[RMDB]
RNA sequence: GGGAACGACUCGAGUAGAGUCGAAAAAACCAUGUCCCGCACAUCACGAGUCACUCUCCACAACCGCGUGCGCACGCUGGACAAGGGUACAAACGAAACCGCCACUUGAAGAUCGAGGUGUGGGUGGAGAAUAAGCAGGUUUCGACCUGCUUAUUCUAAAAGAAACAACAACAACAAC
Reactivity to DMS in 0.01 (KOAc 150mM, MgCl2 10mM, bicine 150mM(pH8.5), 24C), signal-to-noise 4, nucleotides 027 to 126: a080a060c040c010a140u010g010u000c030c010c000g010c040a080c110a060u020c080a100c020g000a120g000u020c040a110c110u000c030u010c020c030a070c140a100a100c050c030g010c030g000u010g000c060g000c080a090c100g020c030u020g010g000a060c100a060a100g000g000g020u000a030c150a040a060a060c090g010a050a080a060c100c020g000c040c010a070c050u000u000g010a100a080g000a070u030c040g000a050g010g010u000g000u000g000g000g020u010g000g020
Reactivity to 2A3 in 0.01 (KOAc 150mM, MgCl2 10mM, bicine 150mM(pH8.5), 24C), signal-to-noise 5, nucleotides 027 to 126: a000a000c050c000a070u080g040u030c000c000c000g020c000a020c000a060u080c010a010c060g030a010g070u060c000a010c060u050c010u010c050c000a020c010a080a070c040c030g050c020g040u060g010c050g000c030a040c040g020c040u050g000g030a040c020a090a060g060g000g000u090a070c080a030a100a010c030g110a120a020a020c030c030g030c030c010a090c050u030u060g050a050a020g060a110u120c040g020a010g050g010u030g020u060g050g050g000u030g040g050